The data come from the RNA Mapping Database (RMDB), library M2PK90. Chemical mapping of a 177-nucleotide RNA with DMS and 2A3. 2A3 is a SHAPE reagent: it acylates the 2'-hydroxyl of flexible nucleotides of all four kinds. The reactions ran in a buffer of 150 mM KOAc, 10 mM MgCl2 and 150 mM bicine (pH 8.5), at 24 C. The 2A3 profile rests on 1,686 reads. DMS adducts were read by reverse transcription with MarathonRT.
RNA sequence: GGGAACGACUCGAGUAGAGUCGAAAAAUCAUGACGAAGAAAGGACGAGAGCAAGCUGAGAGGCAAGCUGAGAGGCAUGCUCAAAGAAAGGAGCGUCCAACUCCUUACCCUCGUCUUUUAAAAAGAACUAUUAGCAGUGGUUCGCCACUGCUAAUAGAAAAGAAACAACAACAACAAC
Reactivity to DMS in 0.01 (KOAc 150mM, MgCl2 10mM, bicine 150mM(pH8.5), 24C), signal-to-noise 3, nucleotides 027 to 126: a100u000c120a090u000g030a090c120g030a140a140g020a040a030a030g010g000a010c010g000a030g010a010g020c120a070a150g010c060u010g000a300g000a120g010g040c030a040a110g040c020u000g000a180g010a200g010g000c010a060u010g050c000u000c000a000a070a070g000a080a080a030g010g010a010g020c010g000u020c170c150a090a220c020u010c000c000u000u000a160c060c030c000u010c000g000u000c010u000u010u000u030a000a060a050a020a030g010a090a150
Reactivity to 2A3 in 0.01 (KOAc 150mM, MgCl2 10mM, bicine 150mM(pH8.5), 24C), signal-to-noise 2, nucleotides 027 to 126: a010u200c070a070u120g070a060c120g080a040a140g160a120a050a000g010g010a000c000g000a000g020a000g070c070a150a020g050c000u000g020a040g000a030g130g090c030a010a020g000c000u000g010a040g000a000g000g030c010a010u020g020c000u020c010a070a030a010g040a000a090a000g030g000a010g000c040g030u050c000c000a010a130c000u000c000c030u000u040a040c000c000c010u000c020g010u000c000u050u010u000u030a080a090a010a000a000g110a070a080